[RMDB]
An RNA of 307 nucleotides, treated with 2A3 and DMS and read out base by base. It was measured as part of the RMDB library POS240. DMS adducts were read by reverse transcription with MarathonRT. Conditions: 150 mM KOAc, 10 mM MgCl2 and 150 mM bicine (pH 8.5), 24 C.

RNA sequence: GGGAACGACUCGAGUAGAGUCGAAAAGGAGGUCUGUAGAAUUUCCCUUAUAUUCAUACCACUGCAGACUAUGAGGUAGAGAUCUAAGGGAAAAUGGUAUGAAUUGGUCUCUGCCAUGAGGGUUCUCUGAAUUCCCACCUUAAUCGCGUACAGAGUACCCAGUAUCUAAUGUCGGUGGGAAUUUACGCGAUUAACGACGUUAGAAGUAGGCUAGUGUGUUGAGGUAUUAAGGUAGGAAACACACUAGUCAAAUUGAUCCUACCUUAGAUACAGAAUUCGUUCUGUAUAAAAGAAACAACAACAACAAC
Reactivity to 2A3 in 0.01 (KOAc 150mM, MgCl2 10mM, bicine 150mM(pH8.5), 24C), signal-to-noise 1, nucleotides 027 to 266: g000g000a000g000g000u000c010u000g050u000a040g030a220a270u070u050u090c030c010c000u030u170a230u030a000u060u090c000a000u000a000c000c010a000c030u000g000c000a000g010a010c070u150a170u180g200a050g040g010u030a000g000a010g000a020u000c060u170a040a080g070g000g020a030a060a020a050u090g010g000u000a030u040g150a180a100u160u100g000g000u010c000u000c000u000g030c010c000a000u070g130a070g060g060g050u140u050c000u000c030u020g010a010a070u000u000c000c010c000a060c010c000u030u030a030a010u030c000g000c000g000u000a030c030a100g100a060g140u040a060c010c000c020a040g010u030a090u140c050u130a060a220u060g110u100c070g060g150u150g090g000g010a000a000u010u020u020a000c000g000c000g010a010u030u000a050a040c040g010a010c000g010u010u100a050g030a140a060g070u160a110g040g050c000u000a030g010u030g010u010g070u010u020g080a070g040g070u070a090u110u080a160a000g000g000u000a010g030g020a000a000a060c000a000c000a010c000u030a020g010u010c010a020a010a020u040u090g070a030u000c000c000u010a010c000c000u040u030a080g070
Reactivity to DMS in 0.01 (KOAc 150mM, MgCl2 10mM, bicine 150mM(pH8.5), 24C), signal-to-noise 1, nucleotides 027 to 266: g000g000a070g010g000u000c000u010g000u020a040g000a300a200u000u000u000c010c000c000u000u010a150u000a090u010u000c020a070u000a010c030c050a300c090u000g000c030a030g000a030c020u000a030u000g030a050g000g030u000a010g000a050g000a000u010c020u010a090a050g000g000g020a030a070a080a050u030g010g030u000a000u010g010a070a090u050u000g020g000u000c040u000c020u010g000c010c000a060u010g000a110g000g020g000u010u000c020u000c000u010g000a090a150u000u000c000c000c010a140c210c100u010u010a070a010u010c020g000c000g000u000a090c240a170g000a150g000u010a040c010c000c000a130g020u030a060u030c060u020a010a030u000g010u000c020g020g020u000g000g000g000a030a010u020u030u010a010c000g020c000g020a030u000u010a070a120c070g010a030c020g020u010u010a000g020a170a210g000u010a070g010g000c010u000a000g020u010g010u000g000u000u010g000a120g010g000u030a080u010u000a000a000g000g010u020a010g000g000a070a030a030c050a000c000a000c000u000a000g010u000c020a000a070a090u040u020g010a220u000c000c000u000a010c030c000u000u000a130g000